[RMDB]
RNA sequence: GGGAACGACUCGAGUAGAGUCGAAAACAAGACUAAUACUUGUAGGUUUGUAGAAUUAGAUGACCAAGGGCAUCAUUUAGACUCCUAUUUUGUCGUUAAGAGGCAUACUAUGGAGAAUUAUGAACUAAAAUCCUGAAGUUCGCUUCAGGAAAAAGAAACAACAACAACAAC
Reactivity to DMS in 0.01 (KOAc 150mM, MgCl2 10mM, bicine 150mM(pH8.5), 24C), signal-to-noise 4, nucleotides 027 to 129: c070a050a040g020a140c070u000a150a110u010a080c060u000u000g030u030a080g010g000u000u000u000g040u030a040g000a080a060u000u000a110g040a070u000g000a070c050c110a060a050g000g020g000c070a030u010c040a070u020u000u030a090g010a100c020u000c000c020u000a030u000u060u000u020g030u020c020g040u010u030a090a130g030a140g040g030c010a000u030a050c150u040a040u000g000g000a020g000a000a000u040u010a000u030g020a040a050c070u040a030a040a020a070
Reactivity to 2A3 in 0.01 (KOAc 150mM, MgCl2 10mM, bicine 150mM(pH8.5), 24C), signal-to-noise 6, nucleotides 027 to 129: c000a000a000g110a020c030u150a050a060u080a240c010u010u070g030u090a040g030g050u010u050u050g020u030a010g060a050a060u110u020a040g040a050u020g020a070c020c040a090a100g050g090g010c000a030u010c000a000u040u040u040a070g020a040c000u000c000c020u010a060u050u050u010u010g030u020c010g010u040u010a130a020g070a130g070g010c000a030u020a020c030u040a040u200g010g000a000g030a010a000u080u020a050u040g030a020a010c010u080a020a000a010a070
Chemical mapping of a 170-nucleotide RNA with DMS and 2A3.
For DMS, 20,821 sequencing reads were counted.
It was measured as part of the RMDB library 15KLIB.
For 2A3, 12,745 sequencing reads were counted.
Conditions: 150 mM KOAc, 10 mM MgCl2 and 150 mM bicine (pH 8.5), 24 C.